Overview: The record gives the reactivity of an RNA of 177 nucleotides to DMS. The RNA was probed in 150 mM KOAc, 10 mM MgCl2 and 150 mM bicine (pH 8.5) at 24 C. The DMS profile rests on 1,823 reads. Source: RMDB library OK2TRN, as collected in RNAgym.
RNA sequence: GGGAACGACUCGAGUAGAGUCGAAAAGUCGGGCCGCAGAGCACGGGGCAGGGUGGCCUCCCAGCACCUAGCCUUGUGCGCCCGGAGCUCUGUGUGCACGGCAGACCUCUCUGCUGCCGCCAGCCGCACCAUCUCUUCGGUUCGCCGAAGAGAUGGUAAAAGAAACAACAACAACAAC
Reactivity to DMS in 0.01 (KOAc 150mM, MgCl2 10mM, bicine 150mM(pH8.5), 24C), signal-to-noise 2, nucleotides 027 to 126: g020u010c010g010g000g010c010c030g000c020a010g000a040g020c000a130c020g020g000g000g030c000a300g000g000g020u000g000g020c050c070u020c050c050c000a300g000c030a020c030c010u000a260g010c010c010u010u000g000u000g010c060g010c030c040c020g010g010a080g020c000u000c020u000g020u000g000u020g010c020a050c000g000g000c000a050g000a100c040c010u010c100u010c030u000g000c030u010g010c000c040g020c050c030a070g020c040c050g000c070